RNA sequence: GGGAACGACUCGAGUAGAGUCGAAAAGAUAUGGAAUUGCUAGGGAGCUGAUACUCGGAAACGAGUAUACAGCGAAGAACUAGUCAAUUCCUAAGUCAAAACACGUAACGGUUCGCCGUUACGUGAAGAAUUCUAAACGGUUCGCCGUUUAGAAUUCAAAAGAAACAACAACAACAAC
Reactivity to 2A3 in 0.01 (KOAc 150mM, MgCl2 10mM, bicine 150mM(pH8.5), 24C), signal-to-noise 2, nucleotides 027 to 126: g000a000u010a010u050g000g020a010a000u010u010g000c000u010a020g000g040g070a220g040c010u010g010a000u010a010c000u010c000g000g020a020a000a000c000g010a000g030u010a000u040a080c000a000g000c000g030a060a050g000a010a010c000u010a000g140u190c030a020a000u000u000c000c000u000a010a010g000u000c010a030a000a080a170c030a000c000g010u000a000a000c010g000g090u040u100c300g050c120c010g010u010u000a000c000g000u000g000a010a010
Reactivity to DMS in 0.01 (KOAc 150mM, MgCl2 10mM, bicine 150mM(pH8.5), 24C), signal-to-noise 3, nucleotides 027 to 126: g020a010u000a040u030g010g010a010a000u000u000g000c000u000a010g040g000g000a040g020c000u000g010a070u000a000c010u010c000g040g000a010a010a020c000g010a000g000u000a010u000a120c010a000g010c010g010a090a120g010a210a300c000u000a000g010u020c040a010a010u000u000c010c000u000a010a060g010u000c010a080a090a200a250c030a000c010g010u000a010a000c000g000g000u000u010c300g030c000c000g020u000u000a000c010g010u000g010a050a120